[RMDB]
RNA sequence: GGGAACGACUCGAGUAGAGUCGAAAAGUGCUUUUGACCUCAACGGCCACUGCCUUGGUAGGACCUAUGGCCUUCUUCGGCUUUAUGCUGGCCAACCUCACCUACCUGAUUGUCAAAGACUAUCAGCGCCAGGAUGGCAGUUCGCUGCCAUCCUGGCAAAAGAAACAACAACAACAAC
Reactivity to 2A3 in 0.01 (KOAc 150mM, MgCl2 10mM, bicine 150mM(pH8.5), 24C), signal-to-noise 2, nucleotides 027 to 126: g130u120g060c050u030u060u010u180g080a030c010c010u050c020a090a020c150g000g010c000c010a040c090u030g000c000c000u030u010g000g000u030a020g010g020a220c000c000u070a250u140g010g000c030c090u000u080c060u050u060c010g050g010c000u080u140u030a190u300g070c040u040g040g020c000c030a000a000c010c010u010c030a030c000c000u010a050c030c000u010g000a000u000u030g020u030c080a110a230a070g000a000c020u050a050u050c010a000g080c000

Structure probing data (2A3) for a 177-nucleotide construct.
Source: RMDB library OK1LIB, as collected in RNAgym.